Structure probing data (DMS and 2A3) for a 177-nucleotide construct. The DMS profile rests on 1,681 reads. The data come from the RNA Mapping Database (RMDB), library OK2TST. The reactions ran in a buffer of 150 mM KOAc, 10 mM MgCl2 and 150 mM bicine (pH 8.5), at 24 C. 2A3 adducts were read by reverse transcription with SuperScript II with manganese.
RNA sequence: GGGAACGACUCGAGUAGAGUCGAAAAAUUCGACAAUUGGUGAACGAAGUGAAGCACCAUGGAUUCACUUAAGACGAGUUAAUGAGGCGCUGAUUAAAGGAUCUCUGAUUACAAGUGAGGAGUCAGGCGGAUGUAAUGACUUCGGUCAUUACAUCCGAAAAGAAACAACAACAACAAC
Reactivity to DMS in 0.01 (KOAc 150mM, MgCl2 10mM, bicine 150mM(pH8.5), 24C), signal-to-noise 3, nucleotides 027 to 126: a110u040u000c040g030a130c100a100a130u000u010g020g010u000g000a080a050c130g020a200a100g000u010g000a060a060g030c030a060c090c070a070u000g010g010a120u000u000c030a020c040u000u000a070a130g020a150c090g000a070g000u000u010a050a030u000g020a120g010g010c030g000c070u010g000a090u020u030a040a130a060g000g010a020u010c010u000c040u020g000a120u010u020a060c140a080a070g010u010g000a130g000g010a060g010u010c060a030g010g000
Reactivity to 2A3 in 0.01 (KOAc 150mM, MgCl2 10mM, bicine 150mM(pH8.5), 24C), signal-to-noise 2, nucleotides 027 to 126: a010u010u000c010g010a030c070a080a090u120u060g010g020u060g030a030a090c090g030a100a030g020u030g130a130a010g080c030a010c000c020a020u050g010g040a020u040u050c010a000c000u030u070a040a010g120a030c030g000a000g080u060u100a080a070u140g060a030g020g000c050g010c120u020g070a060u040u240a110a070a040g110g000a010u030c070u000c020u070g060a090u060u120a060c020a030a040g050u070g000a070g050g000a000g030u030c000a020g060g000